[RMDB]
RNA sequence: GGGAACGACUCGAGUAGAGUCGAAAAUCGCGUUGGCUGCCUAAUUCAAGGAAUUAGCGUGCCUUCAUGCUAAGGGUUUGAUAUCUGCUAAAACCCGGAGCAUUCAUCAAUGCAGGUUAAGCCAAAGAAACGGCUCACGAAUUCGUUCGUGAGCCAAUCUGAUCUAAACCUUCGGGUUUAGAUCAGAAAAAGAAACAACAACAACAAC
Reactivity to DMS in 0.01 (KOAc 150mM, MgCl2 10mM, bicine 150mM(pH8.5), 24C), signal-to-noise 1, nucleotides 027 to 156: u020c030g030c060g020u000u000g000g050c030u030g060c070c060u000a030a060u000u000c010a190a270g020g000a110a060u010u010a000g020c050g000u000g000c000c020u000u010c060a070u020g020c000u010a070a180g000g000g030u000u000u010g000a170u000a090u000c050u000g020c090u000a130a020a020a010c010c000c000g030g000a090g000c020a110u000u000c060a130u030c160a110a110u000g030c030a030g000g020u000u000a070a130g010c060c050a040a100a170g010a100a130a150c150g010g020c000u020c000a010c000g000a010a090u000u040c300g030u000u010c000g010u010g010a030g010c000c010a000a010
Reactivity to 2A3 in 0.01 (KOAc 150mM, MgCl2 10mM, bicine 150mM(pH8.5), 24C), signal-to-noise 2, nucleotides 027 to 156: u100c020g000c010g030u000u020g020g010c030u060g030c050c010u020a050a000u020u030c090a210a180g160g030a070a050u000u000a010g030c060g010u070g010c010c060u000u000c050a070u100g010c010u010a020a030g010g050g000u010u000u000g000a010u050a070u070c030u040g000c030u030a010a010a010a000c020c000c000g020g000a000g020c000a050u090u150c040a050u110c100a070a210u130g020c010a020g030g030u110u210a060a000g030c040c070a050a090a010g090a020a100a030c120g000g000c010u000c000a000c000g020a000a030u090u080c170g040u090u000c000g000u110g110a010g000c000c000a000a000

Structure probing data (DMS and 2A3) for a 207-nucleotide construct. The 2A3 profile rests on 935 reads. For DMS, 1,633 sequencing reads were counted. The data come from the RNA Mapping Database (RMDB), library M2RFPK. Reactivities are given for positions 27 through 156. DMS adducts were read by reverse transcription with MarathonRT.